[RMDB]
RNA sequence: GGGAACGACUCGAGUAGAGUCGAAAAGAUAUGGAAUGUCGAUACCAGUAAGACUGGUGGCUUGGAUUUAGGAACUCGGAAACGAGUUCCUUGUCAGCCACCACGAAUGACCGUAUCGAGCAUUCCUAAGUCAAACCUAAUCCUUCGGGAUUAGGAAGAACACCACAGGAUUCGUCCUGUGGUGUUCAAAAGAAACAACAACAACAAC
Reactivity to 2A3 in 0.01 (KOAc 150mM, MgCl2 10mM, bicine 150mM(pH8.5), 24C), signal-to-noise 2, nucleotides 027 to 156: g020a020u090a030u080g010g000a000a010u010g010u060c000g010a000u000a010c000c010a000g020u000a000a020g010a010c010u010g030g000u010g000g010c030u110u240g160g020a090u300u300u040a010g000g010a000a000c000u000c000g000g060a100a030a020c000g000a020g000u000u000c010c000u000u010g000u020c000a000g000c000c020a000c000c000a000c010g080a160a130u000g010a000c000c020g000u000a000u010c000g000a030g010c000a000u000u010c000c000u010a080a020g040u000c030a070a000a090c000c000u000a000a000u000c020c010u050u070c300g120g000g010a010u020u010a010g000g000a010a020
Structure probing data (2A3) for a 207-nucleotide construct. Reactivities are given for positions 27 through 156. The 2A3 profile rests on 1,616 reads. Source: RMDB library RNAMAK, as collected in RNAgym.